[RMDB]
RNA sequence: GGGAACGACUCGAGUAGAGUCGAAAAGACGGAAAAGAUCGAACCUAAGAAGAUCAGGAAGUGAGAGCCGAAUCCUAGGGCUCCUAGGGACGCAUCGUCCGAUGCGAAAUAAACACAAACGUCGAAACGAUGGGAUACGUUUCGACGUAUCCCAUCGAAAAGAAACAACAACAACAAC
Reactivity to 2A3 in 0.01 (KOAc 150mM, MgCl2 10mM, bicine 150mM(pH8.5), 24C), signal-to-noise 4, nucleotides 027 to 126: g020a010c000g060g040a000a240a000a000g020a010u020c030g040a040a070c030c040u040a060a030g060a080a040g000a080u020c020a010g120g090a070a070g090u070g050a200g000a010g120c000c060g030a070a080u050c060c030u080a050g020g030g050c010u010c000c000u050a040g010g040g020a020c010g000c010a000u010c040g170u120c050c150g010a000u020g000c000g040a020a170a000u170a030a110a000c060a010c020a120a060a040c030g020u010c030g050a060a050a020
Reactivity to DMS in 0.01 (KOAc 150mM, MgCl2 10mM, bicine 150mM(pH8.5), 24C), signal-to-noise 5, nucleotides 027 to 126: g020a020c020g020g010a100a070a090a070g010a020u000c010g000a140a120c100c120u010a110a110g020a130a100g010a000u010c020a120g010g010a120a140g000u010g000a130g000a020g000c040c010g000a060a110u030c020c030u000a060g000g000g010c030u000c010c020u010a060g000g020g010a250c020g010c010a000u010c000g000u040c210c130g010a010u000g000c010g010a040a030a040u020a040a070a090c060a060c130a070a080a090c060g000u000c020g010a070a070a160